Source: RMDB library RFMREP, as collected in RNAgym. Structure probing data (DMS) for a 177-nucleotide construct. The RNA was probed in 150 mM KOAc, 10 mM MgCl2 and 150 mM bicine (pH 8.5) at 24 C.
[RMDB]
RNA sequence: GGGAACGACUCGAGUAGAGUCGAAAACGCCUUGCCAACGCAAGGGAUUUCAGUAUGUUGCAAGCCAUUUCGACGGCUUGUGCCAUAGAUCUUGUAUGCGCUGUCCAAAUACAAGGCCCGCGCAAAUUGAAUGGGUAAAGUUCGCUUUACCCAUUCAAAAAGAAACAACAACAACAAC
Reactivity to DMS in 0.01 (KOAc 150mM, MgCl2 10mM, bicine 150mM(pH8.5), 24C), signal-to-noise 1, nucleotides 027 to 126: c190g010c000c000u000u000g020c050c130a050a140c240g000c010a040a020g000g000g000a100u000u010u000c200a140g000u000a010u010g040u000u000g000c000a000a000g000c000c010a260u000u010u000c260g010a080c120g010g030c010u010u000g010u000g000c140c000a010u000a060g010a010u010c040u000u000g010u000a080u000g040c030g010c030u000g000u000c020c020a080a070a070u010a080c170a120a090g000g020c040c020c280g000c140g010c050a000a030a120u000
DMS adducts were read by reverse transcription with MarathonRT.